An RNA of 177 nucleotides, treated with 2A3 and read out base by base. The RNA was probed in 150 mM KOAc, 10 mM MgCl2 and 150 mM bicine (pH 8.5) at 24 C. 2A3 adducts were read by reverse transcription with SuperScript II with manganese. The 2A3 profile rests on 195 reads.
RNA sequence: GGGAACGACUCGAGUAGAGUCGAAAAACAAUGAUGACAAAACUGCAUACACUCCAGGAUUAUACGAGGGUCAGAGAAAUUAAGUUCAUACUGGCAAUCCCAGCGAAUGACCAUCUGAUACAAAUUAACCGUGACCGUGGUUCGCCACGGUCACGGUAAAAGAAACAACAACAACAAC
Reactivity to 2A3 in 0.01 (KOAc 150mM, MgCl2 10mM, bicine 150mM(pH8.5), 24C), signal-to-noise 1, nucleotides 027 to 126: a000c180a080a130u300g000a000u220g000a000c030a000a240a000a000c000u000g000c000a030u130a180c080a000c000u130c080c000a000g040g040a300u300u210a000u000a300c210g000a160g050g040g050u000c080a080g050a000g000a050a050a050u300u300a080a130g080u080u000c000a000u000a080c260u000g050g050c000a010a010u000c200c200c000a000g000c000g300a000a080u110g000a000c030c000a000u000c000u000g110a080u080a290c000a000a230a130u300u000a160